[RMDB]
RNA sequence: GGGAACGACUCGAGUAGAGUCGAAAAUAUCUUUGCAACAACUGCUACUUGUAAAACACCAGAAAUAAGAAAUAGGUACUGUCUCUGCUCCUGAGGAACACAGAAACUAGCUUGCUGGGUAAGUAUACUAUAAGUGUACUAAGUGAGACGGUUGAAGACCGAAUUACGUGUUCGCACGUAAUUCGGUAAAAGAAACAACAACAACAAC
Reactivity to 2A3 in 0.01 (KOAc 150mM, MgCl2 10mM, bicine 150mM(pH8.5), 24C), signal-to-noise 2, nucleotides 027 to 156: u210a040u050c010u030u000u300g020c040a050a050c010a020a040c060u080g020c030u040a000c030u070u040g070u180a120a070a000a000c070a060c070c010a010g080a110a160a120u160a060a070g020a120a120a040u050a020g030g020u090a100c010u030g010u050c000u020c020u090g070c070u050c080c060u070g050a030g000g060a070a030c060a000c010a060g040a050a220a020c030u030a020g060c000u000u040g010c020u000g000g030g000u050a050a000g010u000a010u000a020c020u040a050u060a300a060g000u000g000u020a000c010u000a010a060g040u040g110a030g000a100c010g010g000u060u040g030a100a030g050

This 207-nucleotide RNA was probed chemically with 2A3. 2A3 adducts were read by reverse transcription with SuperScript II with manganese. For 2A3, 671 sequencing reads were counted. The data come from the RNA Mapping Database (RMDB), library OK3TST. Conditions: 150 mM KOAc, 10 mM MgCl2 and 150 mM bicine (pH 8.5), 24 C.